[RMDB]
Chemical mapping of a 177-nucleotide RNA with 2A3 and DMS. DMS adducts were read by reverse transcription with MarathonRT. The DMS profile rests on 1,643 reads. Conditions: 150 mM KOAc, 10 mM MgCl2 and 150 mM bicine (pH 8.5), 24 C. Values cover nucleotides 27 to 126. For 2A3, 3,000 sequencing reads were counted.

RNA sequence: GGGAACGACUCGAGUAGAGUCGAAAAAAAAAAGCGACCAAAACCUGGAGGAGGAUGGAACACUGGGGGGAGCCGAUACCCUGGACAGGGCAGUCCUGGAGGCAACCGUUAUCCACCUCAGGAAAAACUUGUUUAGUAUGUUCGCAUACUAAACAAGAAAAGAAACAACAACAACAAC
Reactivity to 2A3 in 0.01 (KOAc 150mM, MgCl2 10mM, bicine 150mM(pH8.5), 24C), signal-to-noise 2, nucleotides 027 to 126: a010a000a000a000a000a030g100c060g020a060c030c000a030a050a070a040c020c010u060g190g080a040g030g020a030g040g030a030u030g040g030a150a070c060a040c280u200g000g000g060g000g000g010a000g000c010c000g040a060u080a140c020c000c020u030g000g010a000c010a030g060g110g110c020a020g020u000c010c000u020g010g040a060g020g000c010a020a030c000c010g090u080u030a030u050c000c000a020c030c010u000c010a010g010g000a030a040a030a000a010
Reactivity to DMS in 0.01 (KOAc 150mM, MgCl2 10mM, bicine 150mM(pH8.5), 24C), signal-to-noise 2, nucleotides 027 to 126: a010a040a040a080a090a090g000c040g000a230c030c080a090a050a060a070c060c000u000g000g000a060g030g010a080g010g000a030u000g010g010a070a040c090a040c150u000g000g020g010g030g000g000a200g000c010c020g010a120u020a090c090c000c020u000g010g020a090c050a110g030g010g010c120a070g000u000c010c020u020g000g000a070g010g030c040a100a120c060c030g010u000u000a050u000c000c000a090c010c010u000c000a020g000g010a030a040a060a090a080